Chemical mapping of a 177-nucleotide RNA with DMS. DMS adducts were read by reverse transcription with MarathonRT. For DMS, 3,549 sequencing reads were counted. Reactivities are given for positions 27 through 126. Source: RMDB library TTRINS, as collected in RNAgym.
RNA sequence: GGGAACGACUCGAGUAGAGUCGAAAAGAUAUGGAGAAGACAGCAAUGAUGGACGACCUGAAUCAUAGGAGGAUUCGGAAACGAAUCCUCCUAUGUGAGUCGUCUUGAGCUGUUCUUCUCCUAAGUCGAUUAGGUUGUUGUUCGCAACAACCUAAUCAAAAGAAACAACAACAACAAC
Reactivity to DMS in 0.01 (KOAc 150mM, MgCl2 10mM, bicine 150mM(pH8.5), 24C), signal-to-noise 2, nucleotides 027 to 126: g010a060u000a190u010g000g010a010g000a030a010g000a040c000a010g000c020a300a140u020g000a130u000g000g000a010c000g000a020c020c070u010g010a130a090u000c010a000u000a010g000g000a020g000g010a010u000u010c000g010g010a030a060a140c000g000a000a000u000c000c000u000c000c000u000a000u000g000u010g000a130g010u000c000g010u000c000u000u000g010a080g030c010u010g000u010u000c010u000u000c000u000c000c010u000a000a080g010u010c040